[RMDB]
RNA sequence: GGGAACGACUCGAGUAGAGUCGAAAAGGCACUGCGGACCCGCGCGGUAUUAAUGGGCUUCACGGUUGCGUUUUAGAAGUGCACCUAUAAGGAAAAUGAGCACCACGGUGAUCGCUACUGUCCCGUAGCGAAUCUGCGUCAGGAGGCUGAAGUAAUGCACCUUUAGUAAGUUCGCUUACUAAAGGUGAAAAGAAACAACAACAACAAC
Reactivity to DMS in 0.01 (KOAc 150mM, MgCl2 10mM, bicine 150mM(pH8.5), 24C), signal-to-noise 4, nucleotides 027 to 156: g020g030c020a040c040u000g020c030g020g010a110c040c010c030g050c090g020c050g060g020u000a060u000u000a100a090u010g020g020g010c040u000u020c030a080c050g020g020u000u000g000c030g000u010u000u010u010a100g010a090a100g010u000g020c040a120c040c020u000a110u020a080a120g030g010a040a040a090a100u000g010a130g020c030a090c020c010a040c030g020g030u000g010a190u000c020g030c010u000a020c020u000g000u000c030c030c060g020u000a010g020c010g010a020a090u000c030u000g020c000g030u010c060a100g010g010a110g000g020c030u000g020a050a100g000u010a070a140u000g020
Reactivity to 2A3 in 0.01 (KOAc 150mM, MgCl2 10mM, bicine 150mM(pH8.5), 24C), signal-to-noise 5, nucleotides 027 to 156: g060g000c020a000c080u040g000c020g020g060a120c010c010c020g020c020g000c040g030g040u080a090u080u190a150a110u120g040g020g000c030u110u100c040a060c090g030g000u060u090g020c010g050u030u030u090u110a130g030a150a000g020u040g040c000a040c010c010u130a130u070a260a160g100g010a080a050a030a080u130g030a010g020c020a030c040c010a010c030g050g010u080g020a040u040c000g000c000u010a010c010u070g060u070c000c010c020g000u000a000g000c000g020a010a050u010c050u120g030c010g030u060c060a060g040g020a030g050g000c030u040g020a060a000g040u110a010a020u020g030